[RMDB]
RNA sequence: GGGAACGACUCGAGUAGAGUCGAAAAGAUAUGGAGGACAGCAACAGCCGUGACCUCGGAAACGAGGUACGGACAUGCUGUUCUCCUAAGUCAAACUAUGCCAAGUUCUUCGGAACUUGGCAUAGAACACCAAAAUUUCGUUCGCGAAAUUUUGGUGAAAAGAAACAACAACAACAAC
Reactivity to DMS in 0.01 (KOAc 150mM, MgCl2 10mM, bicine 150mM(pH8.5), 24C), signal-to-noise 1, nucleotides 027 to 126: g000a040u010a300u000g000g020a010g000g000a000c000a010g000c010a040a070c260a230g000c010c010g000u000g030a020c000c000u000c000g000g010a040a050a160c010g030a010g010g000u000a020c000g000g000a080c200a110u000g000c000u000g000u000u000c000u000c000c000u000a000a020g030u010c020a130a190a260c020u000a000u000g000c000c000a000a010g000u000u000c000u010u020c200g040g020a000a000c000u000u000g000g010c000a000u000a020g000a090a160